This 207-nucleotide RNA was probed chemically with 2A3 and DMS. 2A3 is a SHAPE reagent: it acylates the 2'-hydroxyl of flexible nucleotides of all four kinds. DMS adducts were read by reverse transcription with MarathonRT. It was measured as part of the RMDB library OK3TST. Reactivities are rounded to 0.1 and cut off at 0 and 3. 2A3 adducts were read by reverse transcription with SuperScript II with manganese.

RNA sequence: GGGAACGACUCGAGUAGAGUCGAAAAGCAGUUUCACUCACGAUAGACUCUUGAGGAAGAGUGUCACUAUUGCUUCCUCAAGCAAUAGAUUACGGUAUGCCAAUACUGUAAUUGACAGCAGAUUGGCAUCUGCUCUAUCUCAUGAAACUGGUGAGUCACGAUUACGGAUAUUCGUAUCCGUAAUCGUAAAAGAAACAACAACAACAAC
Reactivity to 2A3 in 0.01 (KOAc 150mM, MgCl2 10mM, bicine 150mM(pH8.5), 24C), signal-to-noise 9, nucleotides 027 to 156: g100c020a010g000u010u000u000c020a030c030u070c020a040c090g030a050u040a050g020a050c010u010c010u040u040g080a060g050g110a060a020g010a010g010u070g070u080c030a010c080u070a040u040u100g020c000u030u020c010c040u090c070a010a000g000c000a010a030u030a040g080a080u060u080a030c030g020g010u100a010u020g090c030c020a040a020u060a180c040u000g010u070a060a100u080u160g080a050c040a020g000c000a000g010a040u050u100g080g020c030a020u000c000u010g000c000u000c000u010a030u010c020u010c030a020u030g010a030a030a030c010u010g030g070u090g030a040g080u070c080
Reactivity to DMS in 0.01 (KOAc 150mM, MgCl2 10mM, bicine 150mM(pH8.5), 24C), signal-to-noise 4, nucleotides 027 to 156: g020c020a040g010u000u000u000c010a090c040u020c040a110c120g030a050u020a010g020a080c060u000c000u000u000g000a160g040g010a030a040g010a080g010u000g020u010c080a300c070u000a030u000u000g020c000u010u000c070c080u000c050a040a020g000c060a030a040u000a070g000a250u000u000a040c030g010g030u020a030u010g020c160c230a080a130u000a030c020u000g020u000a020a090u000u010g000a100c050a110g010c000a020g000a130u000u000g020g020c120a230u000c020u000g010c020u010c010u000a040u000c000u000c080a050u000g000a020a010a020c010u000g010g010u000g010a060g020u020c090